The record gives the reactivity of an RNA of 177 nucleotides to 2A3 and DMS. High 2A3 reactivity points to a flexible backbone, as in loops and unpaired stretches. The DMS profile rests on 2,871 reads. The reactions ran in a buffer of 150 mM KOAc, 10 mM MgCl2 and 150 mM bicine (pH 8.5), at 24 C.
RNA sequence: GGGAACGACUCGAGUAGAGUCGAAAAGAUAUGGAUGGCAAUGAGGGGAGGACAUGUAUCGGAAACGAUAUUUGUCCAUCGAUCUGAGCCAUCCUAAGUCACGGGUCGUAUGUUCGCAUACGACCAACAGACCAACUAACUUCGGUUAGUUGGUCUGAAAAGAAACAACAACAACAAC
Reactivity to 2A3 in 0.01 (KOAc 150mM, MgCl2 10mM, bicine 150mM(pH8.5), 24C), signal-to-noise 3, nucleotides 027 to 126: g000a000u030a020u050g020g000a010u000g010g050c020a050a110u210g040a300g080g090g020g020a060g040g010a000c010a000u010g000u010a000u000c000g000g040a010a010a030c010g000a010u010a010u000u000u000g020u010c010c010a010u120c010g040a040u000c020u060g040a030g000c010c000a000u000c000c000u000a000a010g000u010c030a010c210g110g010g010u000c000g000u000a000u020g050u010u100c300g000c120a000u000a010c000g000a010c010c000a000a000
Reactivity to DMS in 0.01 (KOAc 150mM, MgCl2 10mM, bicine 150mM(pH8.5), 24C), signal-to-noise 4, nucleotides 027 to 126: g000a020u000a270u010g000g000a010u010g000g010c000a070a200u000g020a070g000g030g020g010a060g010g010a020c000a010u010g010u000a000u000c000g010g000a090a070a110c010g000a010u000a000u000u000u000g010u000c000c000a090u000c070g000a130u000c010u010g000a300g000c020c000a010u000c000c000u000a020a070g010u000c050a200c300g000g000g010u000c000g030u000a000u000g000u000u010c220g010c010a000u000a000c000g000a000c000c000a000a040